[RMDB]
RNA sequence: GGGAACGACUCGAGUAGAGUCGAAAAGUUGUGGCAGCUGAGGAUCCUGCCUUACCUUCAGUCUAGAUUCAAUGAUGUGUCCCGAAGGCUUGAUUCAAUUGAAUCGGCUCUAGCCAUAGAGACGAAGUGGAGACUAUAGCUUCGGCUAUAGUCUCCAAAAAGAAACAACAACAACAAC
Reactivity to DMS in 0.01 (KOAc 150mM, MgCl2 10mM, bicine 150mM(pH8.5), 24C), signal-to-noise 1, nucleotides 027 to 126: g000u000u010g020u000g000g010c040a060g000c100u000g000a050g000g000a050u000c090c020u000g020c020c020u030u000a030c060c040u020u000c100a110g010u000c040u010a060g000a070u030u000c090a060a010u000g000a050u000g000u000g000u010c010c000c020g010a080a080g020g000c010u000u020g000a070u000u010c050a170a170u000u000g010a050a080u000c000g000g000c040u000c030u000a070g030c090c100a070u000a110g000a030g000a080c070g000a050a140g010
This 177-nucleotide RNA was probed chemically with DMS. The reactions ran in a buffer of 150 mM KOAc, 10 mM MgCl2 and 150 mM bicine (pH 8.5), at 24 C.